[RMDB]
About this RNA
Conditions: 150 mM KOAc, 10 mM MgCl2 and 150 mM bicine (pH 8.5), 24 C. Chemical mapping of a 177-nucleotide RNA with 2A3. It was measured as part of the RMDB library OK1LIB. The 2A3 profile rests on 527 reads. 2A3 is a SHAPE reagent: it acylates the 2'-hydroxyl of flexible nucleotides of all four kinds.
RNA sequence: GGGAACGACUCGAGUAGAGUCGAAAAUUAUGUAAGCUUAAAAACGAAGUAUUUUAAGUUUAUUAAACUACUUAGAACUGAUCUCUUUAAUACUACGUUGCAAUUCAUGCUCAAUACAACACAGAAACCUAAAUCCCGGAUUCGUCCGGGAUUUAGGAAAAGAAACAACAACAACAAC
Reactivity to 2A3 in 0.01 (KOAc 150mM, MgCl2 10mM, bicine 150mM(pH8.5), 24C), signal-to-noise 1, nucleotides 027 to 126: u150u050a010u070g000u000a030a030g010c000u060u000a020a210a000a000a000c060g140a190a020g000u000a100u000u000u080u080a050a000g000u030u010u000a010u070u150a060a130a000c060u100a000c040u060u080a040g040a060a040c050u060g060a130u100c040u010c000u000u030u170a050a020u060a000c000u000a000c000g030u000u000g010c000a040a170u040u180c080a000u100g000c000u000c020a000a050u100a130c000a040a030c010a070c000a010g130a090a160a000